An RNA of 177 nucleotides, treated with DMS and read out base by base. The reactions ran in a buffer of 150 mM KOAc, 10 mM MgCl2 and 150 mM bicine (pH 8.5), at 24 C. The DMS profile rests on 725 reads.

RNA sequence: GGGAACGACUCGAGUAGAGUCGAAAAAGCUCGCAAGGCGGACAAGGUUAGUAGCGAAGCGCACUAUAGCGACGGCCAUCGUUGUAGGUAGCAGAACUACUGAGUACGCUACUUGAUACGUGAAUCGCACUUUUGAGAUGUUCGCAUCUCAAAAGUGAAAAGAAACAACAACAACAAC
Reactivity to DMS in 0.01 (KOAc 150mM, MgCl2 10mM, bicine 150mM(pH8.5), 24C), signal-to-noise 2, nucleotides 027 to 126: a130g070c050u000c050g000c150a080a140g030g010c010g030g000a010c130a050a110g010g010u000u010a020g080u000a010g010c000g030a300a160g010c010g000c110a220c060u000a050u010a030g020c050g000a060c100g000g010c280c140a140u000c010g050u000u000g000u000a010g000g000u010a290g070c000a040g000a070a050c040u000a100c070u000g010a070g000u000a070c070g000c000u000a040c020u000u010g030a040u000a210c050g030u010g000a070a100u000c050g030